The record gives the reactivity of an RNA of 177 nucleotides to 2A3 and DMS. Conditions: 150 mM KOAc, 10 mM MgCl2 and 150 mM bicine (pH 8.5), 24 C. DMS adducts were read by reverse transcription with MarathonRT. It was measured as part of the RMDB libraries RFM100 and RFMREP.
[RMDB]
RNA sequence: GGGAACGACUCGAGUAGAGUCGAAAAAUCACUUUCACACUUGGAGUCGGCAUAUACGAGACAUACAUUCCCUUUUUAUAUAUCAGAUACUCAAAACCGAAACGCCAAACCCACCUUCGCGGUGGGUGUUUAUCCUAGGUUUCGACCUAGGAUAAACAAAAGAAACAACAACAACAAC
Reactivity to 2A3 in 0.01 (KOAc 150mM, MgCl2 10mM, bicine 150mM(pH8.5), 24C), signal-to-noise 9, nucleotides 027 to 126: a000u080c030a040c070u060u120u100c060a040c010a020c060u030u060g120g000a030g020u030c020g020g030c070a040u120a010u030a150c070g020a020g020a060c030a040u140a040c030a060u050u070c000c000c000u040u040u010u070u020a180u010a020u010a030u050c040a040g060a100u090a090c020u050c080a050a060a070a080c040c020g090a070a060a040c060g050c030c030a040a050a060c000c010c000a000c000c000u070u110c200g020c060g020g000u000g000g000g000u000
Reactivity to DMS in 0.01 (KOAc 150mM, MgCl2 10mM, bicine 150mM(pH8.5), 24C), signal-to-noise 5, nucleotides 027 to 126: a090u030c080a080c110u010u000u000c070a100c090a100c080u010u010g010g020a050g010u010c010g000g000c060a040u010a060u020a070c100g000a100g000a080c110a080u010a080c130a120u000u010c010c000c000u020u010u000u030u000a060u010a100u000a060u050c040a050g000a110u020a040c070u020c030a040a050a080a130c070c050g000a050a040a040c090g000c060c080a050a110a080c000c000c000a010c000c000u000u030c190g010c140g020g010u000g000g000g000u000